[RMDB]
RNA sequence: GGGAACGACUCGAGUAGAGUCGAAAAAGAACUCUCUGAAUCAAUGUCAGUAAACCAGGAUAGGCUGGAGUACUUGUCAACCAACUGCCAAACAAAGAGUCACUGCACUGAAUGCCACCCAAGAAGCUUAGAGUAUAGAAAUAUUUCAAAUGUGGACAUAUCCCACUCAAUUCGUUGAGUGGGAUAUAAAAGAAACAACAACAACAAC
Reactivity to 2A3 in 0.01 (KOAc 150mM, MgCl2 10mM, bicine 150mM(pH8.5), 24C), signal-to-noise 2, nucleotides 027 to 156: a000g040a020a030c000u020c010u000c010u020g000a070a080u080c130a050a100u080g070u050c010a000g010u080a070a060a000c010c000a010g030g060a160u130a190g080g000c020u000g000g020a020g030u020a110c060u080u060g040u050c020a000a040c080c000a010a060c050u060g020c010c030a120a010a030c030a030a140a040g040a020g010u010c010a010c050u020g010c040a000c050u050g010a030a030u070g000c010c000a050c050c020c010a080a000g060a030a000g010c010u140u120a030g000a010g090u080a050u030a100g030a020a150a020u160a060u030u150u050c040a040a060a090u140g040u040g010g000a000c000
Reactivity to DMS in 0.01 (KOAc 150mM, MgCl2 10mM, bicine 150mM(pH8.5), 24C), signal-to-noise 2, nucleotides 027 to 156: a130g030a090a060c060u000c030u010c030u050g000a170a200u020c050a100a120u010g020u000c010a070g020u000a040a080a140c060c000a110g010g010a110u010a140g000g030c000u030g000g010a170g060u000a040c040u000u000g040u020c040a040a050c050c020a000a110c040u000g020c030c010a040a070a100c090a070a120a080g010a180g000u000c000a090c050u010g030c050a090c030u000g000a030a210u000g000c060c040a050c020c040c040a060a180g010a090a220g020c000u000u000a080g000a120g000u010a090u000a110g010a080a100a100u000a040u000u000u010c010a010a070a150u000g010u000g020g000a110c210
Structure probing data (2A3 and DMS) for a 207-nucleotide construct. Values are in units of 0.01, from 0 to 300, in steps of 10. The 2A3 profile rests on 877 reads.